Overview:
The record gives the reactivity of an RNA of 177 nucleotides to 2A3 and DMS. Values cover nucleotides 27 to 126. For 2A3 the reverse transcriptase was SuperScript II with manganese. The data come from the RNA Mapping Database (RMDB), library OK2TST. Conditions: 150 mM KOAc, 10 mM MgCl2 and 150 mM bicine (pH 8.5), 24 C.

[RMDB]
RNA sequence: GGGAACGACUCGAGUAGAGUCGAAAACGACUGCGGCUGCUGGCCUCCUCGCUGAGCUCGCCGCAGAAAAGGCCAGCACACUGUCAGCUAGCAGAGUUCCUGGCAGUGGUCUUGCAGCUGGCAGUGCGUUAAGAGAACCCUUCGGGGUUCUCUUAACAAAAGAAACAACAACAACAAC
Reactivity to 2A3 in 0.01 (KOAc 150mM, MgCl2 10mM, bicine 150mM(pH8.5), 24C), signal-to-noise 1, nucleotides 027 to 126: c010g030a000c010u010g010c040g030g000c010u020g000c010u010g010g010c020c000u080c020c050u120c060g070c090u120g130a010g000c010u010c130g020c020c000g030c000a000g030a010a100a000a000g070g010c000c020a000g020c020a020c010a000c040u010g000u000c000a000g010c050u090a050g050c050a050g060a030g260u130u190c010c000u040g050g010c030a100g060u030g030g040u010c020u030u100g020c000a010g000c000u040g000g030c000a000g020u020g040c000
Reactivity to DMS in 0.01 (KOAc 150mM, MgCl2 10mM, bicine 150mM(pH8.5), 24C), signal-to-noise 2, nucleotides 027 to 126: c110g030a190c060u000g020c010g000g040c020u010g020c040u000g020g000c020c090u010c180c110u010c160g000c050u010g020a020g000c030u000c270g000c020c020g030c000a040g000a000a040a130a080g010g010c020c030a020g000c050a190c010a000c000u000g000u000c000a010g000c040u000a090g020c040a070g020a140g000u000u000c070c020u000g000g010c090a100g010u010g000g010u000c050u000u010g010c040a050g040c000u010g010g010c000a050g010u000g000c140